[RMDB]
RNA sequence: GGGAACGACUCGAGUAGAGUCGAAAAUAAAACUACCACAAAUAAAUAAACGCAAACAACGCAAAUUACGCUCCAGCUUACGCAAAAGUCGCGUAAGUUUAUCACACUUUUGGAGUCGGCUUAAGAACUUCUAAUCUAGCUAGAAUCUUUCAAGCUGCGAAUAUCAUUCCUUCGGGAAUGAUAUUCGAAAAGAAACAACAACAACAAC
Reactivity to 2A3 in 0.01 (KOAc 150mM, MgCl2 10mM, bicine 150mM(pH8.5), 24C), signal-to-noise 2, nucleotides 027 to 156: u090a010a060a040a050c030u140a090c030c030a010c060a020a200a060u260a060a100a090u290a050a150a070c130g040c140a090a150a100c060a030a040c120g020c090a130a140a100u240u120a080c030g000c020u000c010c000a030g030c010u000u000a000c000g000c000a060a270a160a050g090u150c050g000c010g000u000a000a000g000u000u000u070a060u030c010a010c010a030c130u120u110u060u040g050g000a000g050u040c020g010g010c000u000u000a030a010g030a030a100c000u040u000c000u030a030a140u020c030u040a030g000c000u000a020g000a010a070u020c030u020u080u100c040a010a000g000c010u070g090